[RMDB]
RNA sequence: GGGAACGACUCGAGUAGAGUCGAAAAAUGCUGUAAUGGCACUGCAGUGCAGGAAUGGUUCCCAGCCACUUUUUCUGGGAUUCUAAUCGUACGUCACAAUUGUGUGUGUAUCGUUGACGGAGGAGUAAGGCCAUCUAAAGUUCGCUUUAGAUGGCCUAAAAGAAACAACAACAACAAC
Reactivity to 2A3 in 0.01 (KOAc 150mM, MgCl2 10mM, bicine 150mM(pH8.5), 24C), signal-to-noise 1, nucleotides 027 to 126: a000u050g000c000u010g040u110a120a100u120g050g000c010a000c050u000g040c010a040g020u040g120c020a020g130g060a190a110u180g110g030u040u000c000c010c000a020g060c000c010a050c060u230u230u060u110u050c010u010g030g000g110a060u100u000c020u070a120a040u040c000g000u020a000c040g050u000c050a020c060a060a200u270u180g100u080g000u010g020u000g000u180a070u160c110g000u050u000g000a040c030g020g030a030g000g020a050g010u040a080
Reactivity to DMS in 0.01 (KOAc 150mM, MgCl2 10mM, bicine 150mM(pH8.5), 24C), signal-to-noise 2, nucleotides 027 to 126: a060u000g010c020u000g010u000a090a040u010g020g040c040a170c070u000g010c080a080g060u020g010c040a040g010g020a100a140u000g010g010u000u000c000c000c000a130g020c050c030a090c150u000u000u000u020u000c000u000g000g000g000a090u000u020c060u000a060a110u000c040g000u000a040c030g010u020c010a010c020a080a120u000u020g010u000g010u000g010u010g010u000a060u010c080g020u000u010g000a060c120g010g000a110g000g010a060g020u010a150
An RNA of 177 nucleotides, treated with 2A3 and DMS and read out base by base. For 2A3, 699 sequencing reads were counted.